[RMDB]
RNA sequence: GGGAACGACUCGAGUAGAGUCGAAAAACACCAAAACUGAAAACGGAAGGCAAUCCUUCCACGACGAUACUUACUUUCCUUUGAUCGUCGUUACUACUGGCAUAGACACAAAGGAGAACAAACAUGAGCGCGGACACUGACUUCGGUCAGUGUCCAACAGGAUUAAGUACUUCGGUACUUAAUCCUGAAAAGAAACAACAACAACAAC
Reactivity to DMS in 0.01 (KOAc 150mM, MgCl2 10mM, bicine 150mM(pH8.5), 24C), signal-to-noise 2, nucleotides 027 to 156: a120c030a140c030c030a070a060a080a260c110u000g000a120a020a080a100c020g040g000a030a050g080g070c110a130a180u010c010c000u000u010c010c030a150c030g000a040c030g030a020u010a040c060u000u000a040c090u010u000u010c040c060u020u000u000g000a020u000c010g030u000c000g030u000u000a040c060u000a120c070u020g010g020c040a120u000a150g000a090c040a110c060a000a050a020g010g030a100g010a120a150c080a070a070a110c090a100u010g020a120g000c050g000c070g020g010a040c000a000c000u000g000a010c000u000u000c300g040g010u010c000a000g010u010g000u010c000c000a000a040
Reactivity to 2A3 in 0.01 (KOAc 150mM, MgCl2 10mM, bicine 150mM(pH8.5), 24C), signal-to-noise 8, nucleotides 027 to 156: a000c080a100c010c040a070a030a040a070c100u170g080a080a070a040a030c060g000g000a000a020g020g010c140a060a190u270c000c000u030u000c010c010a010c000g020a000c010g010a010u080a160c020u100u040a040c020u060u200u090c030c000u070u010u070g040a040u060c020g010u000c000g010u040u050a030c020u030a030c040u030g070g000c050a100u080a120g080a050c040a000c020a120a050a030g010g030a020g030a050a030c050a090a080a020c040a090u210g070a050g110c150g000c090g050g000a000c000a000c000u000g000a000c000u020u060c150g030g000u000c000a000g000u000g010u010c000c000a000a000